[RMDB]
An RNA of 207 nucleotides, treated with 2A3 and read out base by base.
The RNA was probed in 150 mM KOAc, 10 mM MgCl2 and 150 mM bicine (pH 8.5) at 24 C.
Source: RMDB library RNAMAK, as collected in RNAgym.
For 2A3 the reverse transcriptase was SuperScript II with manganese.
For 2A3, 3,074 sequencing reads were counted.

RNA sequence: GGGAACGACUCGAGUAGAGUCGAAAACGCUGGGUGUAUAGUGUAAGGCGUUGAUCGACUGAAGCGCGCACGGUCGGGAGCCUGCCGAGUACACCUGUGCUGAAGCGCGCACGGCAACCGAAAGGUGCGAAAAGCGUCACGAUUCGUCGUGACGCAACCUUGUACGAAGUUUCGACUUCGUACAAGGAAAAGAAACAACAACAACAAC
Reactivity to 2A3 in 0.01 (KOAc 150mM, MgCl2 10mM, bicine 150mM(pH8.5), 24C), signal-to-noise 3, nucleotides 027 to 156: c020g010c020u040g010g000g020u020g050u010a050u050a140g210u260g080u190a300a230g020g000c010g070u120u000g000a000u000c000g010a000c010u030g020a170a060g020c010g010c010g010c010a010c030g000g000u000c010g010g000g000a000g000c010c000u010g000c020c010g030a080g170u010a010c000a000c020c000u010g010u010g000c010u030g010a140a040g000c000g020c000g000c000a000c000g000g000c020a020a010c000c000g050a110a010a010g050g000u040g000c020g040a040a070a020a070g010c000g010u010c000a010c000g000a010u080u100c250g030u000c000g000u140g000a000c000g000c000a000a010